[RMDB]
RNA sequence: GGGAACGACUCGAGUAGAGUCGAAAAUCCUAAGUCGCAGGCAUAGAUUAAGCUAAGCGGGAGCUUUAUCGGAAACGAUAAAGCGACGAUCGCUUAGGUCACAUCUAUGAACUACCUGCGAUAUGGAAAAACGUUCCAGGUUUCGACCUGGAACGAAGUGAAGAUUUAACUUCGGUUAAAUCUUCACAAAAGAAACAACAACAACAAC
Reactivity to 2A3 in 0.01 (KOAc 150mM, MgCl2 10mM, bicine 150mM(pH8.5), 24C), signal-to-noise 2, nucleotides 027 to 156: u020c020c000u030a100a040g030u020c000g000c000a000g000g000c000a000u000a000g010a000u040u070a040a050g040c000u000a000a000g010c000g000g010g000a000g000c010u010u010u000a000u000c010g000g050a100a030a070c000g000a000u000a000a000a000g000c000g020a100c020g000a010u010c010g000c000u010u000a000g020g090u060c030a040c010a050u010c000u000a010u020g020a020a050c060u110a060c060c000u000g000c000g000a000u000a000u010g010g020a000a150a020a000a030c000g000u000u010c010c000a000g020g030u020u030u170c230g080a040c000c000u000g000g000a000a000c000g010a060a010
Reactivity to DMS in 0.01 (KOAc 150mM, MgCl2 10mM, bicine 150mM(pH8.5), 24C), signal-to-noise 1, nucleotides 027 to 156: u010c000c000u010a100a170g040u000c020g020c010a000g020g040c000a030u010a000g010a010u000u000a120a090g030c000u010a000a010g000c000g020g000g000a200g020c030u000u010u000a000u000c010g020g040a240a110a300c010g040a000u000a000a010a000g090c000g010a000c130g010a040u000c000g000c000u010u000a000g000g000u010c040a050c170a030u000c030u010a000u030g010a070a170c040u000a240c010c040u000g010c000g020a000u000a050u000g020g000a070a140a110a170a150c040g030u000u000c000c000a000g000g000u010u000u000c300g000a070c010c000u000g020g020a000a000c000g000a000a040
The record gives the reactivity of an RNA of 207 nucleotides to 2A3 and DMS. Source: RMDB library RNAMAK, as collected in RNAgym. For 2A3 the reverse transcriptase was SuperScript II with manganese. For DMS the reverse transcriptase was MarathonRT.